Conditions: 150 mM KOAc, 10 mM MgCl2 and 150 mM bicine (pH 8.5), 24 C. An RNA of 207 nucleotides, treated with 2A3 and DMS and read out base by base. It was measured as part of the RMDB library OK3TST. 2A3 adducts were read by reverse transcription with SuperScript II with manganese.
RNA sequence: GGGAACGACUCGAGUAGAGUCGAAAAGUCUGCCGAGGCCAGCUACAAACUGAUUGGCGUGGUCGAGCAGUGGAACAGCGGAGCAGAGUUCGAUCUGCUCACUCGAUUGCAAGAGGUGGUAGAGGACUUCGAGAAGAACAUGGAUCGCAAGGUGCGCAUAAUGCAGAGCAUUCGUGCUCUGCAUUAUAAAAGAAACAACAACAACAAC
Reactivity to 2A3 in 0.01 (KOAc 150mM, MgCl2 10mM, bicine 150mM(pH8.5), 24C), signal-to-noise 2, nucleotides 027 to 156: g000u000c040u060g000c030c020g120a110g010g040c020c020a020g000c020u030a090c100a140a200a180c120u160g060a190u200u120g000g030c150g070u120g060g000u040c000g020a000g010c000a000g050u050g020g040a090a110c070a030g050c070g050g060a000g000c010a000g010a000g030u130u150c060g080a140u010c040u000g020c000u020c010a030c000u010c000g100a050u070u090g040c050a080a010g000a000g000g020u040g020g000u070a020g000a010g060g000a010c040u040u070c020g050a040g030a150a030g000a000a000c010a040u090g080g010a030u040c030g000c040a020a030g090g010u120g030c050g000c020
Reactivity to DMS in 0.01 (KOAc 150mM, MgCl2 10mM, bicine 150mM(pH8.5), 24C), signal-to-noise 1, nucleotides 027 to 156: g000u000c020u000g000c040c030g010a120g020g040c000c010a120g020c040u240a110c190a040a090a130c080u000g000a200u020u020g000g020c060g000u030g100g070u000c000g000a050g010c040a070g000u010g000g020a080a070c070a060g000c070g060g000a020g040c040a010g010a120g000u000u020c160g020a240u000c030u000g030c000u000c000a010c010u010c070g000a080u010u010g000c130a050a070g000a160g060g010u000g030g000u010a070g010a100g020g000a100c040u010u000c080g010a120g000a060a030g030a070a090c100a080u020g020g030a050u000c110g000c040a070a200g000g010u000g040c050g000c210